[RMDB]
RNA sequence: GGGAACGACUCGAGUAGAGUCGAAAAUUCUUUAGACCUGUCUAGCUCACACAGUCUUGAUGCCUGGGUUUUAGGCUGCUGUACUGUUGCUGGGGCUCACUUCCUGUGGGUAGGCUGUUAUUUUGCCCGCAGAUCAAGUCCUCACUGUCUAGAUGCCGUGUUACUGCUGUUUCGACAGCAGUAACACAAAAGAAACAACAACAACAAC
Reactivity to 2A3 in 0.01 (KOAc 150mM, MgCl2 10mM, bicine 150mM(pH8.5), 24C), signal-to-noise 2, nucleotides 027 to 156: u050u050c000u050u110u100a040g030a080c010c030u030g070u000c000u010a010g000c040u040c020a030c010a010c010a010g020u000c050u040u180g120a130u140g030c030c010u140g080g090g110u140u060u060u180a000g010g000c010u040g020c010u050g030u150a030c030u030g030u090u070g000c060u010g000g010g000g000c030u000c050a010c020u010u040c020c010u000g000u010g030g000g020u000a020g020g070c030u110g120u210u120a260u100u100u050u070g000c000c000c000g010c000a000g000a090u080c110a020a000g050u050c010c000u040c020a020c030u070g030u080c000u010a010g010a020u070g070c040c040